RNA sequence: GGGAACGACUCGAGUAGAGUCGAAAAUCUCCUACAAUCAGGCUGGACCUUGGACUGGGAGGUUUAAGCCCGUAACAGAGUUGCUCUUACCAGAUUGGAGACACAAGAAUGUGCAGGAGACUAUCUGGACGAACACUAAUUUCGAUUAGUGUUCGUCAAAAGAAACAACAACAACAAC
Reactivity to 2A3 in 0.01 (KOAc 150mM, MgCl2 10mM, bicine 150mM(pH8.5), 24C), signal-to-noise 3, nucleotides 027 to 126: u000c010u000c000c000u020a030c060a080a120u100c020a010g020g000c010u130g060g080a290c000c000u050u060g040g030a030c050u060g010g070g030a010g020g040u000u000u040a040a010g040c000c010c000g040u060a110a020c030a070g080a020g050u080u130g030c020u000c000u020u050a060c020c010a040g000a110u050u080g070g030a080g080a030c010a010c000a060a090g200a210a190u100g000u050g000c040a010g000g070a040g020a040c020u050a050u060c040u020g040
Reactivity to DMS in 0.01 (KOAc 150mM, MgCl2 10mM, bicine 150mM(pH8.5), 24C), signal-to-noise 3, nucleotides 027 to 126: u010c030u010c000c010u000a080c070a090a160u020c090a030g010g010c020u000g000g010a190c050c010u000u000g010g030a130c240u000g000g020g000a020g010g000u000u000u000a060a160g030c020c000c030g010u030a050a160c150a110g000a090g000u010u000g000c020u010c020u000u010a130c080c030a070g010a080u000u000g000g000a100g020a100c040a040c060a060a110g000a060a090u000g020u000g010c040a050g020g000a140g020a050c110u000a060u000c040u000g000
This 177-nucleotide RNA was probed chemically with 2A3 and DMS.
The 2A3 profile rests on 2,847 reads.
In probing experiments dimethyl sulfate is read out at A N1 and C N3, which are open when not base-paired.
For DMS the reverse transcriptase was MarathonRT.